The record gives the reactivity of an RNA of 177 nucleotides to 2A3 and DMS. The DMS profile rests on 10,071 reads. The RNA was probed in 150 mM KOAc, 10 mM MgCl2 and 150 mM bicine (pH 8.5) at 24 C.

RNA sequence: GGGAACGACUCGAGUAGAGUCGAAAAGAUAUGGAGGAUGUGGUCGCCCGCACGUUGAAAUCGGAAACGAUGGAGUGCUCGACGUAACAUCAUCCUCCUAAGUCGCAGUGCACGUUCGCGUGCACAAGAAUGACGAAUUGUUCGCAAUUCGUCAUUCAAAAGAAACAACAACAACAAC
Reactivity to 2A3 in 0.01 (KOAc 150mM, MgCl2 10mM, bicine 150mM(pH8.5), 24C), signal-to-noise 7, nucleotides 027 to 126: g020a010u080a030u160g010g000a000g000g000a020u020g010u050g050g040u020c020g060c090c170c080g000c070a020c010g210u300u070g020a030a040a000u000c010g010g060a090a040a030c010g000a000u010g000g030a030g000u010g000c020u020c010g020a030c020g050u170a080a100c040a150u250c000a000u000c010c000u000c000c000u020a120a030g040u030c020g010c160a050g000u000g000c000a010c020g020u060u080c220g020c000g150u010g000c000a000c000a000a010
Reactivity to DMS in 0.01 (KOAc 150mM, MgCl2 10mM, bicine 150mM(pH8.5), 24C), signal-to-noise 7, nucleotides 027 to 126: g010a040u000a300u000g010g010a030g010g010a020u000g030u000g020g000u000c000g010c120c050c300g000c010a010c010g010u000u020g000a090a140a020u000c000g000g000a100a090a140c000g010a010u000g000g010a060g010u000g010c010u000c060g020a010c010g000u010a040a080c060a030u010c020a010u000c010c000u000c000c000u010a010a080g010u000c020g020c180a140g010u000g000c010a010c000g010u000u000c230g010c020g010u000g000c000a000c010a090a060